[RMDB]
Overview:
An RNA of 177 nucleotides, treated with 2A3 and DMS and read out base by base. Conditions: 150 mM KOAc, 10 mM MgCl2 and 150 mM bicine (pH 8.5), 24 C. 2A3 adducts were read by reverse transcription with SuperScript II with manganese. Reactivities are rounded to 0.1 and cut off at 0 and 3. Source: RMDB library TTRINS, as collected in RNAgym.
RNA sequence: GGGAACGACUCGAGUAGAGUCGAAAAGAUAUGGAAAUACUACCCACCGAUAUAUGUAGGGCGAAGAACACUGGGAUCGGAAACGAUCCCAGUGGGAGCCUGAAAUAUCGAGGUAUUUCCUAAGUCACCUUAUUCUAUUGUUCGCAAUAGAAUAAGGAAAAGAAACAACAACAACAAC
Reactivity to 2A3 in 0.01 (KOAc 150mM, MgCl2 10mM, bicine 150mM(pH8.5), 24C), signal-to-noise 3, nucleotides 027 to 126: g100a100u280a230u300g020g000a020a010a010u010a010c030u170a240c010c020c030a010c030c000g010a000u000a010u010a010u120g040u060a030g050g000g000c020g290a300a020g020a110a000c000a000c010u000g020g050g000a000u000c010g050g040a090a050a080c000g000a000u030c040c000c010a000g000u000g000g000g000a000g030c000c000u000g000a020a010a000u020a000u010c010g000a010g020g000u000a000u000u000u000c000c000u010a060a030g290u230c080a060
Reactivity to DMS in 0.01 (KOAc 150mM, MgCl2 10mM, bicine 150mM(pH8.5), 24C), signal-to-noise 6, nucleotides 027 to 126: g010a100u020a220u010g000g000a010a010a010u000a010c010u000a110c060c020c060a300c150c000g000a000u000a010u010a030u010g010u000a210g000g000g000c000g010a120a210g000a200a190c000a010c000u000g000g000g010a010u010c000g000g020a070a080a170c000g000a020u000c000c000c000a000g000u000g000g000g000a100g010c000c000u000g010a060a070a020u000a000u010c000g000a070g010g010u000a010u000u000u000c010c000u000a050a150g000u010c110a130